[RMDB]
RNA sequence: GGGAACGACUCGAGUAGAGUCGAAAAGUAGGGGUUGUCGAAGGGGAUGUCGUCGUCGUAGCUGUCGUAGUCGGUCGCCGGUUGCGGCUGGUGGUGAGUGGUCGGCCGCGGUGGCGGCUCGCGGCCACAUGCAAGCAGUUUUCGAACUGCUUGCAUGAAAAGAAACAACAACAACAAC
Reactivity to 2A3 in 0.01 (KOAc 150mM, MgCl2 10mM, bicine 150mM(pH8.5), 24C), signal-to-noise 3, nucleotides 027 to 126: g120u120a050g020g030g030g000u100u070g080u110c060g050a060a050g040g020g000g010a040u080g040u070c040g030u000c020g010u020c020g040u050a030g020c050u040g050u060c010g010u030a070g070u060c100g050g000u060c030g030c070c020g030g010u180u090g030c010g010g000c020u000g010g020u040g010g030u080g050a100g030u100g030g030u070c040g000g000c000c010g000c010g000g050u040g010g000c000g000g000c020u000c020g000c010g000g000c020c010a030
Reactivity to DMS in 0.01 (KOAc 150mM, MgCl2 10mM, bicine 150mM(pH8.5), 24C), signal-to-noise 3, nucleotides 027 to 126: g000u010a110g010g020g000g010u010u000g020u000c070g000a120a100g010g000g010g010a060u010g000u000c050g030u000c050g000u010c070g020u000a080g020c040u000g000u000c040g020u000a090g020u000c090g000g010u000c040g010c020c010g000g000u000u010g010c040g000g000c010u010g010g020u000g010g000u000g010a100g020u010g000g020u000c060g020g010c000c000g020c010g000g020u000g000g010c010g010g010c030u000c050g010c030g010g010c010c060a120